RNA sequence: GGGAACGACUCGAGUAGAGUCGAAAAACUUCAUAGCCCUCAUUAUGGCUUAUGGCAAUUGCACAUUUGGUGCUCCAGAUGAUGCCUCUCGGUUACUUCAUACCGUGCUUGCAAAGGCUGAGUUAUGCCUGCAUGAUACGUUCGCGUAUCAUGCAGGAAAAGAAACAACAACAACAAC
Reactivity to 2A3 in 0.01 (KOAc 150mM, MgCl2 10mM, bicine 150mM(pH8.5), 24C), signal-to-noise 3, nucleotides 027 to 126: a000c090u200u150c050a120u160a060g000c030c010c010u010c070a160u080u270a140u260g000g000c000u050u060a110u190g020g020c070a000a030u020u160g020c000a020c000a120u050u100u080g100g010u190g060c050u040c010c040a010g000a090u080g000a070u020g060c000c000u030c020u010c010g010g040u000u060a070c040u010u150c030a060u110a100c000c030g020u060g030c120u120u070g020c050a060a040a090g000g000c000u000g000a050g100u160u090a040u090g040
Reactivity to DMS in 0.01 (KOAc 150mM, MgCl2 10mM, bicine 150mM(pH8.5), 24C), signal-to-noise 1, nucleotides 027 to 126: a070c040u030u080c090a190u030a090g070c050c000c070u130c200a160u060u020a080u000g000g000c080u020u000a030u000g000g030c040a070a080u020u090g000c010a040c010a060u000u010u000g080g000u000g040c070u000c020c010a000g000a080u020g000a140u010g000c000c080u060c000u000c000g010g000u020u040a050c120u050u000c030a130u020a040c080c020g000u000g000c150u010u000g000c040a040a040a030g010g000c010u010g090a030g000u070u060a010u100g000

Structure probing data (2A3 and DMS) for a 177-nucleotide construct.
The data come from the RNA Mapping Database (RMDB), library OK1LIB.
The reactions ran in a buffer of 150 mM KOAc, 10 mM MgCl2 and 150 mM bicine (pH 8.5), at 24 C.